[RMDB]
RNA sequence: GGGAACGACUCGAGUAGAGUCGAAAACUCGGUAUGCCAUGAACAGAACGAAACUAGAGGUAGAUGUUCCAUUGAGGCCUAAGAGCAGGUGGUGCAUGGCUGUAGUCAGAUUGUAUCGCGAGCCGAAAAAUAUAUCAAUAUUCGUAUUGAUAUAUUUAAAAGAAACAACAACAACAAC
Reactivity to DMS in 0.01 (KOAc 150mM, MgCl2 10mM, bicine 150mM(pH8.5), 24C), signal-to-noise 9, nucleotides 027 to 126: c030u000c020g010g010u010a060u010g010c010c030a050u010g010a070a050c060a060g000a070a060c050g000a150a100a070c060u010a070g010a090g010g010u010a050g010a110u020g000u000u000c020c030a110u030u020g000a100g000g010c010c030u000a080a090g010a110g020c090a050g000g030u000g010g010u000g000c010a030u010g000g000c010u010g010u010a040g010u010c060a090g000a090u020u000g010u010a150u010c040g010c040g000a100g000c030c020g010a010a080
Reactivity to 2A3 in 0.01 (KOAc 150mM, MgCl2 10mM, bicine 150mM(pH8.5), 24C), signal-to-noise 9, nucleotides 027 to 126: c010u020c010g010g020u110a070u190g020c010c020a040u060g030a050a020c020a050g050a070a020c030g050a060a020a030c020u060a040g020a050g170g060u050a030g020a180u060g020u030u000c010c010a020u020u110g050a040g070g010c000c020u110a110a020g050a020g060c020a010g010g030u040g020g010u030g020c010a010u020g070g000c020u030g050u030a030g010u010c020a010g000a100u030u010g040u040a040u040c020g000c030g040a020g010c010c000g020a070a010